Chemical mapping of a 207-nucleotide RNA with 2A3 and DMS.
RNA sequence: GGGAACGACUCGAGUAGAGUCGAAAACUUAAGGCAAAUGAGACAAUAGUCAGUUCACACUUUUUUAUAUACUCCAAGAGGAUCUAUUAUGAUGGUCAAGUCUUGUCCCAAGCAUUGAAACCUCUUUCAAGGUGUGUGUUUUGGUCAGAAACAAUCGCAAAAUACCACCUUUCGAGGUGGUAUUUUGAAAAGAAACAACAACAACAAC
Reactivity to 2A3 in 0.01 (KOAc 150mM, MgCl2 10mM, bicine 150mM(pH8.5), 24C), signal-to-noise 1, nucleotides 027 to 156: c010u110u090a060a040g020g000c020a030a020a180u170g060a060g030a070c060a070a110u030a070g030u040c050a040g000u100u120c010a040c010a040c090u110u100u000u020u170u020a070u030a040u040a150c040u050c080c010a000a050g010a030g070g060a030u020c040u010a090u190u080a120u300g130a040u110g000g000u010c010a010a060g100u030c020u020u090g030u020c010c010c010a030a030g000c010a010u020u120g060a040a020a120c000c020u000c000u050u190u160c060a080a020g010g000u010g000u000g000u000g000u000u020u050u070g040g000u080c070a010g040a010a100a030c060a030a030u100c150g000
Reactivity to DMS in 0.01 (KOAc 150mM, MgCl2 10mM, bicine 150mM(pH8.5), 24C), signal-to-noise 2, nucleotides 027 to 156: c050u000u000a070a060g030g020c000a040a080a110u000g010a170g010a110c040a100a120u000a100g000u010c030a130g000u000u010c030a050c030a080c030u000u000u000u010u000u030a050u010a110u000a120c040u000c020c030a030a150g020a100g020g010a110u000c050u000a130u020u000a070u000g020a090u000g020g020u000c040a080a110g010u000c030u000u010g010u000c070c010c030a060a140g040c050a160u010u010g000a110a080a080c030c010u000c050u010u000u010c120a040a080g010g030u000g030u000g020u010g000u000u000u020u000g000g020u020c040a130g000a100a060a110c070a080a200u010c020g000
The reactions ran in a buffer of 150 mM KOAc, 10 mM MgCl2 and 150 mM bicine (pH 8.5), at 24 C. For 2A3 the reverse transcriptase was SuperScript II with manganese. Source: RMDB library OK3TST, as collected in RNAgym.